Source information
Source: RMDB library OK1LIB, as collected in RNAgym. An RNA of 177 nucleotides, treated with 2A3 and DMS and read out base by base.
RNA sequence: GGGAACGACUCGAGUAGAGUCGAAAAUGGUACAUGGACAUCGGUGGGUUUUGUCUUUGACAUGCUAGGCGGCUAUGCUGCCGCCUCAUCCACUGCUUGCUUGACAUUUAAAUGCUUGAUGGGUGAGGGUAAUCUUGCUAUUCGUAGCAAGAUUACCAAAAGAAACAACAACAACAAC
Reactivity to 2A3 in 0.01 (KOAc 150mM, MgCl2 10mM, bicine 150mM(pH8.5), 24C), signal-to-noise 6, nucleotides 027 to 126: u080g020g020u070a020c030a040u070g010g070a000c010a050u040c050g050g010u070g050g050g000u070u090u090u070g050u040c020u100u050u240g030a030c020a020u090g040c050u060a010g000g010c010g000g000c020u070a120u300g080c090u100g000c040c000g000c000c000u000c000a000u000c010c000a020c030u030g040c030u010u030g010c010u030u060g040a030c000a030u140u150u120a160a190a030u120g050c060u050u050g010a070u070g120g000g000u050g020a060g020
Reactivity to DMS in 0.01 (KOAc 150mM, MgCl2 10mM, bicine 150mM(pH8.5), 24C), signal-to-noise 2, nucleotides 027 to 126: u010g010g050u020a050c020a000u020g010g010a100c110a050u000c000g030g000u010g000g000g000u000u030u000u000g000u000c020u000u000u050g000a090c020a030u000g010c130u030a040g000g000c000g000g000c000u030a080u040g030c150u000g020c000c010g010c030c000u000c160a030u000c000c020a040c110u000g010c080u010u000g000c040u000u000g000a130c090a060u000u010u000a100a040a030u050g000c050u020u000g010a050u040g000g000g000u010g010a080g010
The reactions ran in a buffer of 150 mM KOAc, 10 mM MgCl2 and 150 mM bicine (pH 8.5), at 24 C. The DMS profile rests on 4,275 reads. High DMS reactivity at an A or C suggests that its Watson-Crick edge is free. DMS adducts were read by reverse transcription with MarathonRT.